[RMDB]
RNA sequence: GGGAACGACUCGAGUAGAGUCGAAAAGUCUGCAUUCCAGGAAGUUACAGCCUAACUGAAAGUACUCUCUGUUCCUAUGGGAGAUGGGAGAGUGGUUUUUGGAGGGCACCUAUCCAGUUCUGCUGUGAGCACUCCUCUACUUCGGUAGAGGAGUGCUAAAAGAAACAACAACAACAAC
Reactivity to DMS in 0.01 (KOAc 150mM, MgCl2 10mM, bicine 150mM(pH8.5), 24C), signal-to-noise 1, nucleotides 027 to 126: g010u010c020u000g000c050a050u000u010c020c050a160g020g000a070a040g000u000u000a120c170a090g010c040c030u000a020a300c010u000g010a020a020a070g010u000a020c000u000c000u000c010u000g020u010u000c000c000u010a080u000g040g000g010a050g050a040u020g020g010g000a000g010a000g060u000g000g000u000u000u000u000u000g010g000a300g020g050g010c040a060c100c050u000a120u010c010c040a080g010u000u000c160u000g030c050u000g000u010g000
Source: RMDB library OK2TRN, as collected in RNAgym. Chemical mapping of a 177-nucleotide RNA with DMS. The RNA was probed in 150 mM KOAc, 10 mM MgCl2 and 150 mM bicine (pH 8.5) at 24 C.